[RMDB]
RNA sequence: GGGAACGACUCGAGUAGAGUCGAAAAGAUAUGGAGGAGGUAUGCAUGGCGAAGAACUCGGAAACGAGGGAGCCAUGUACUCCUCCUAAGUCAAAUCGGUUCCGUUACUUCGGUAACGGAACCGAAACAUAUGUUUCCUGUUCGCAGGAAACAUAUGAAAAGAAACAACAACAACAAC
Reactivity to DMS in 0.01 (KOAc 150mM, MgCl2 10mM, bicine 150mM(pH8.5), 24C), signal-to-noise 6, nucleotides 027 to 126: g000a060u000a300u000g010g010a020g000g010a020g010g010u000a180u010g010c000a010u000g000g010c000g010a090a150g010a100a160c000u000c000g000g010a130a090a180c010g010a030g000g000g000a080g010c000c000a000u000g010u000a030c000u000c010c000u000c000c000u000a000a060g000u000c030a060a100a130u000c000g010g010u000u000c000c010g000u000u000a000c000u000u010c190g020g000u000a000a000c000g000g000a000a000c010c000g000a000a010a100
Reactivity to 2A3 in 0.01 (KOAc 150mM, MgCl2 10mM, bicine 150mM(pH8.5), 24C), signal-to-noise 3, nucleotides 027 to 126: g040a010u070a030u160g010g000a000g010g000a000g020g090u280a060u150g020c000a010u010g000g000c010g150a300a030g010a090a040c010u000c000g020g020a080a050a030c010g000a010g000g000g000a000g000c010c000a000u000g000u000a000c000u000c010c000u000c000c000u000a000a000g000u010c010a000a020a110u030c000g000g000u010u000c000c010g000u000u000a000c000u030u070c300g130g000u000a000a000c000g020g010a000a000c000c000g000a000a000a010
This 177-nucleotide RNA was probed chemically with DMS and 2A3. 2A3 adducts were read by reverse transcription with SuperScript II with manganese.